An RNA of 177 nucleotides, treated with DMS and 2A3 and read out base by base.
RNA sequence: GGGAACGACUCGAGUAGAGUCGAAAAAAAAAAGAUAUGGACUAGGAACUACACUAUGCAGCCGAAGAACUUAGGUCGGAAACGACCUAAGGGAGGCUGACAUAGUGCCUAGUCCUAAGUCAAAAAACUCGUAUAGAUAGUUCGCUAUCUAUACGAGAAAAGAAACAACAACAACAAC
Reactivity to DMS in 0.01 (KOAc 150mM, MgCl2 10mM, bicine 150mM(pH8.5), 24C), signal-to-noise 2, nucleotides 027 to 126: a000a020a080a030a070a090g000a050u000a150u000g010g010a020c000u000a000g000g000a180a010c050u030a300c030a000c020u000a010u000g000c000a000g000c020c000g000a100a060g010a140a180c010u000u000a000g000g010u000c000g030g010a020a020a080c000g020a020c000c000u000a000a000g000g020g000a050g010g020c000u000g010a040c020a000u000a000g010u000g000c010c020u000a010g000u000c000c000u020a000a060g000u000c010a010a080a090a080a100a090
Reactivity to 2A3 in 0.01 (KOAc 150mM, MgCl2 10mM, bicine 150mM(pH8.5), 24C), signal-to-noise 1, nucleotides 027 to 126: a000a000a000a000a020a030g040a040u040a030u050g010g000a000c000u000a010g010g010a050a050c170u230a080c300a000c000u000a000u010g000c020a000g000c030c020g190a300a030g010a030a000c000u000u000a000g000g020u000c020g040g000a020a010a000c000g000a000c000c000u000a000a000g020g000g000a010g010g000c020u000g020a010c000a000u010a000g000u010g000c010c000u000a000g000u000c000c000u000a000a000g000u000c000a000a000a030a160a080a140
Values are in units of 0.01, from 0 to 300, in steps of 10. It was measured as part of the RMDB library TTRDES.